Background
Structure probing data (DMS and 2A3) for a 177-nucleotide construct. The RNA was probed in 150 mM KOAc, 10 mM MgCl2 and 150 mM bicine (pH 8.5) at 24 C.

RNA sequence: GGGAACGACUCGAGUAGAGUCGAAAAGAUAUGGACGACGAAGAAUGAACUACCGUGUCAAUCGGAAACGAUUGAUGCGGCAUUCAGAGUCCUAAGUCAAAUCUGAUUAUGUUCGCAUAAUCAGAAACAUGGAUAGCAAGUUCGCUUGCUAUCCAUGAAAAGAAACAACAACAACAAC
Reactivity to DMS in 0.01 (KOAc 150mM, MgCl2 10mM, bicine 150mM(pH8.5), 24C), signal-to-noise 4, nucleotides 027 to 126: g000a040u000a240u010g000g000a010c020g000a290c260g000a090a060g000a080a060u000g020a130a100c150u020a280c010c010g000u000g000u000c000a000a000u000c000g020g000a070a040a110c000g010a000u000u000g000a010u000g000c000g000g000c030a020u000u000c010a030g000a300g000u000c010c010u000a040a140g000u000c030a070a090a120u000c000u000g010a010u000u000a000u000g000u010u000c260g000c010a010u000a000a000u000c000a000g000a010a070a140
Reactivity to 2A3 in 0.01 (KOAc 150mM, MgCl2 10mM, bicine 150mM(pH8.5), 24C), signal-to-noise 3, nucleotides 027 to 126: g030a020u050a040u070g020g000a030c030g010a010c060g050a100a080g070a140a200u150g020a160a130c130u150a100c300c020g010u020g010u000c000a000a010u000c010g010g000a040a030a020c000g000a000u000u010g000a000u010g010c010g000g020c010a000u010u000c000a010g020a000g000u020c010c000u050a060a020g050u020c020a070a020a220u010c010u010g010a000u000u000a010u010g040u020u070c250g000c140a000u010a020a000u000c000a000g000a020a020a020

Background:
For 2A3, 7,144 sequencing reads were counted. Values cover nucleotides 27 to 126. The DMS profile rests on 4,161 reads.